Conditions: 150 mM KOAc, 10 mM MgCl2 and 150 mM bicine (pH 8.5), 24 C. This 207-nucleotide RNA was probed chemically with 2A3 and DMS. 2A3 adducts were read by reverse transcription with SuperScript II with manganese. Values cover nucleotides 27 to 156. For DMS the reverse transcriptase was MarathonRT.
RNA sequence: GGGAACGACUCGAGUAGAGUCGAAAAGCUCAGUCUUUGGCCUUUACCAGAGCCGAGCGGGUCUCUUUAGCGCAGCCUCGAUUACCUCUGGGGACUUCCUGUCCCUGCUGGACUCAAUUUACCACGAUUGCGAUAUUGCACAGAGUCAGCGCCUGCCGAAUCAUUGAUACUUCGGUAUCAAUGAUUCAAAAGAAACAACAACAACAAC
Reactivity to 2A3 in 0.01 (KOAc 150mM, MgCl2 10mM, bicine 150mM(pH8.5), 24C), signal-to-noise 3, nucleotides 027 to 156: g010c000u000c030a030g160u060c010u020u050u060g020g000c020c050u120u140u260a090c020c020a010g000a010g030c030c040g010a010g000c020g060g020g000u010c020u000c000u030u030u130a060g020c100g020c050a020g010c040c000u050c040g090a130u090u180a090c020c010u000c070u090g020g010g010g010a020c000u170u090c040c140u130g020u010c010c000c000u010g010c030u050g010g040a080c020u040c070a090a130u080u120u190a150c030c040a080c110g100a090u060u070g010c020g040a060u090a120u230u300g010c020a040c020a050g020a010g050u050c010a010g040c020g030c030c010u040g070c020c020
Reactivity to DMS in 0.01 (KOAc 150mM, MgCl2 10mM, bicine 150mM(pH8.5), 24C), signal-to-noise 1, nucleotides 027 to 156: g010c030u000c010a080g000u000c010u010u000u010g000g060c030c130u020u000u020a050c010c010a090g010a010g000c010c020g040a040g060c040g000g030g000u030c020u000c010u000u090u010a110g030c060g080c020a130g030c040c020u000c030g040a150u000u000a060c060c010u000c040u000g000g010g020g050a060c040u000u000c100c140u020g010u000c010c000c040u000g020c040u010g030g010a130c030u000c060a080a100u000u010u020a050c010c000a090c050g000a140u000u000g020c040g000a090u000a040u000u010g030c090a130c070a050g020a110g010u000c020a140g010c050g030c060c020u000g040c130c100